Description
An RNA of 177 nucleotides, treated with 2A3 and DMS and read out base by base. For 2A3 the reverse transcriptase was SuperScript II with manganese. The 2A3 profile rests on 950 reads. Reactivities are given for positions 27 through 126. Conditions: 150 mM KOAc, 10 mM MgCl2 and 150 mM bicine (pH 8.5), 24 C. For DMS, 739 sequencing reads were counted. It was measured as part of the RMDB library OK2TST.
[RMDB]
RNA sequence: GGGAACGACUCGAGUAGAGUCGAAAACGCCGCCAUCAGCAGCGCCUUUGAGGGCCAGACCGGCAUUAUCGAAGAACGUACCGAGACCAUGGAAAAGGCUCUUUCCAUCGGCGUGGACAAUGUGCGACUAUCGCAGCACUUUCGAGUGCUGCGAUAGAAAAGAAACAACAACAACAAC
Reactivity to 2A3 in 0.01 (KOAc 150mM, MgCl2 10mM, bicine 150mM(pH8.5), 24C), signal-to-noise 1, nucleotides 027 to 126: c030g110c000c000g080c010c010a120u060c040a090g030c010a000g030c020g000c010c020u020u020u040g050a020g010g050g040c000c000a020g070a090c010c010g000g030c020a010u040u110a040u050c080g020a090a070g000a180a110c140g010u110a120c060c000g020a000g020a030c000c020a040u080g000g000a020a220a180a140g010g000c010u020c000u080u090u050c040c020a020u040c020g040g000c010g040u040g000g020a000c040a020a090u110g050u130g040c040g040a010
Reactivity to DMS in 0.01 (KOAc 150mM, MgCl2 10mM, bicine 150mM(pH8.5), 24C), signal-to-noise 1, nucleotides 027 to 126: c130g010c060c020g000c050c040a040u000c060a090g060c050a250g010c050g000c110c010u000u000u040g020a050g000g000g000c010c040a130g000a260c060c060g040g000c120a120u000u000a040u000c030g010a010a090g000a080a070c260g040u020a120c090c020g000a080g000a090c040c090a290u010g000g000a060a060a080a080g000g000c040u010c030u010u010u000c100c000a000u010c120g000g010c010g080u000g000g000a150c130a050a060u010g010u010g000c000g010a240